[RMDB]
RNA sequence: GGGAACGACUCGAGUAGAGUCGAAAAUGAUCAGAGAGUUCUACGAAGACUUCAGCACUGCCUCGAUCCAGGAUCACUGCCGCAAGCUUUCUUCGCCUCAGAACAAGUACCACCUCUACACCGAAAAGAUACUAGCAGAGGAUGAACCUCGGAACCGAUACGACAAAAAGUUCGCUUUUUGUCGUAUAAAAGAAACAACAACAACAAC
Reactivity to DMS in 0.01 (KOAc 150mM, MgCl2 10mM, bicine 150mM(pH8.5), 24C), signal-to-noise 3, nucleotides 027 to 156: u010g000a180u000c050a130g010a140g040a090g020u000u000c040u000a160c070g030a160a100g020a060c080u000u000c020a040g000c040a080c050u010g000c010c010u000c050g000a120u010c100c070a090g010g000a080u010c020a040c040u000g020c010c000g010c080a050a050g020c030u010u000u010c030u000u000c040g020c030c060u020c040a090g000a070a080c060a040a050g010u010a060c020c000a050c050c020u020c030u000a090c040a150c100c060g000a090a060a080a130g000a120u000a050c060u000a070g030c030a090g000a040g000g030a120u010g010a040a110c030c000u000c030g010g020a090a070c020c030g020
Reactivity to 2A3 in 0.01 (KOAc 150mM, MgCl2 10mM, bicine 150mM(pH8.5), 24C), signal-to-noise 4, nucleotides 027 to 156: u090g010a040u090c040a020g040a000g000a010g110u040u000c020u050a060c040g050a030a030g060a080c030u050u030c080a000g010c020a010c060u060g020c010c020u040c080g050a100u050c040c060a030g010g030a020u110c030a010c090u050g040c040c000g030c060a030a050g010c040u040u080u060c000u020u040c030g030c010c020u090c030a010g010a050a010c030a060a000g030u020a050c020c030a050c040c010u020c020u020a030c040a050c040c040g060a050a080a030a000g070a030u100a080c030u050a060g080c070a020g010a010g010g000a010u090g030a050a060c000c010u000c030g000g030a010a010c040c020g020